The record gives the reactivity of an RNA of 207 nucleotides to 2A3 and DMS.
The reactions ran in a buffer of 150 mM KOAc, 10 mM MgCl2 and 150 mM bicine (pH 8.5), at 24 C.
For DMS, 1,703 sequencing reads were counted.
The data come from the RNA Mapping Database (RMDB), library OK3TST.
RNA sequence: GGGAACGACUCGAGUAGAGUCGAAAAACUGAAUGGGCAAAAACUGGAAGCAUUCCCUUUGAAAACUGGCACAAGACAGGGAUGCCUUCUCUCACCACUCCUAUUCAACAUAGUGUUGGAAGUUCUGGCCAGGGCAAUCAGACAGGAGAAAGAAAUAGUUGUACAAGAGUUUCGACUCUUGUACAACAAAAGAAACAACAACAACAAC
Reactivity to 2A3 in 0.01 (KOAc 150mM, MgCl2 10mM, bicine 150mM(pH8.5), 24C), signal-to-noise 3, nucleotides 027 to 156: a000c040u060g010a020a020u060g020g020g010c060a050a040a040a080a210c230u200g030g000a010a010g010c010a040u160u240c000c000c000u030u040u060g050a070a050a030a030c060u060g070g050c040a040c030a200a040g070a060c020a040g030g000g010a010u020g030c050c000u040u000c020u000c010u020c000a060c040c020a020c020u030c000c000u070a070u060u040c000a020a030c040a100u150a090g140u070g000u070u020g080g020a100a090g010u040u030c020u060g010g040c000c020a000g000g030g010c010a020a050u080c000a040g040a070c020a010g030g050a020g020a020a100a000g100a020a130a040u120a030
Reactivity to DMS in 0.01 (KOAc 150mM, MgCl2 10mM, bicine 150mM(pH8.5), 24C), signal-to-noise 1, nucleotides 027 to 156: a170c050u030g020a020a080u000g080g000g010c110a140a030a080a080a060c030u000g010g010a060a080g030c010a080u000u000c010c010c030u000u000u000g010a070a030a050a160c040u010g050g050c090a160c110a130a150g000a150c110a030g020g000g010a080u010g000c030c020u000u020c000u000c010u000c040a130c060c010a140c070u000c030c030u000a110u020u000c030a030a000c030a080u000a090g000u000g010u000u000g030g000a020a080g030u000u000c020u010g010g000c010c020a030g010g000g030c050a050a080u020c070a040g000a040c070a060g010g020a120g010a040a040a110g000a080a050a060u000a200